RNA sequence: GGGAACGACUCGAGUAGAGUCGAAAAGAUAUGGAAGCCUAAGGGCUUGGAUUUACGAUGUGGUCGGAAACGACCACUAAGUUGUCAGCCUAUGGCUUCCUAAGUCAAAGCACACUUCGGUGUGCAACCAGGUAUAGACGUUCGCGUCUAUACCUGGAAAAGAAACAACAACAACAAC
Reactivity to 2A3 in 0.01 (KOAc 150mM, MgCl2 10mM, bicine 150mM(pH8.5), 24C), signal-to-noise 2, nucleotides 027 to 126: g000a020u090a030u170g000g000a010a000g000c030c000u070a090a190g040g000g020c070u110u150g130g000a050u300u300u220a020c010g000a030u200g000u010g000g010u000c010g000g010a040a070a100c000g010a000c000c000a000c010u000a000a000g000u000u020g040u010c000a010g000c010c000u010a020u030g000g000c000u000u020c000c000u000a020a000g000u000c050a000a100a110g020c010a000c000a000c000u030u130c270g180g000u010g010u020g000c000a000a010
Reactivity to DMS in 0.01 (KOAc 150mM, MgCl2 10mM, bicine 150mM(pH8.5), 24C), signal-to-noise 2, nucleotides 027 to 126: g020a050u010a300u000g000g000a000a000g020c020c000u010a060a080g000g010g000c000u020u000g010g000a000u010u010u000a000c000g000a300u010g010u000g000g000u000c000g000g010a100a060a240c000g030a020c000c000a000c000u000a060a290g030u000u000g010u000c000a030g000c020c000u010a300u000g010g000c000u000u000c000c000u000a030a040g000u010c030a090a030a130g000c000a010c000a010c000u000u020c170g050g010u000g000u000g000c000a010a030